An RNA of 177 nucleotides, treated with DMS and 2A3 and read out base by base.
Reactivities are given for positions 27 through 126.
The RNA was probed in 150 mM KOAc, 10 mM MgCl2 and 150 mM bicine (pH 8.5) at 24 C.
[RMDB]
RNA sequence: GGGAACGACUCGAGUAGAGUCGAAAAGAUAUGGAGUCUCAGCCGAGGAUCGUACUGGGUCGGAAACGACCUUACGGGAGGGGACUCCUAAGUCAAACCUUUCCUAACCUUCGGGUUAGGAAAGGAACUCCUUUCCCAUGUUCGCAUGGGAAAGGAGAAAAGAAACAACAACAACAAC
Reactivity to DMS in 0.01 (KOAc 150mM, MgCl2 10mM, bicine 150mM(pH8.5), 24C), signal-to-noise 1, nucleotides 027 to 126: g010a030u000a300u010g000g000a070g020u020c030u000c010a000g010c000c020g000a200g000g000a160u030c020g010u000a070c300u010g030g000g010u000c000g000g000a130a060a140c010g030a000c000c000u000u000a010c020g050g000g000a020g010g000g000g000a010c020u010c010c000u000a000a080g000u000c070a020a080a170c020c000u000u000u000c010c010u000a000a020c000c000u000u000c180g030g000g020u000u000a010g010g000a020a000a020g000g000a070a140
Reactivity to 2A3 in 0.01 (KOAc 150mM, MgCl2 10mM, bicine 150mM(pH8.5), 24C), signal-to-noise 1, nucleotides 027 to 126: g050a000u090a040u220g000g000a000g000u000c010u000c010a040g060c010c010g180a230g270g050a270u300c020g000u030a050c210u270g080g040g000u010c000g020g010a040a090a050c020g000a000c000c000u000u020a000c020g030g020g010a020g000g000g010g000a010c000u020c000c000u000a070a010g010u010c010a010a050a250c000c000u000u030u000c010c000u000a000a010c000c000u050u120c300g150g010g010u000u010a000g000g010a020a000a000g000g000a000a000

For DMS the reverse transcriptase was MarathonRT.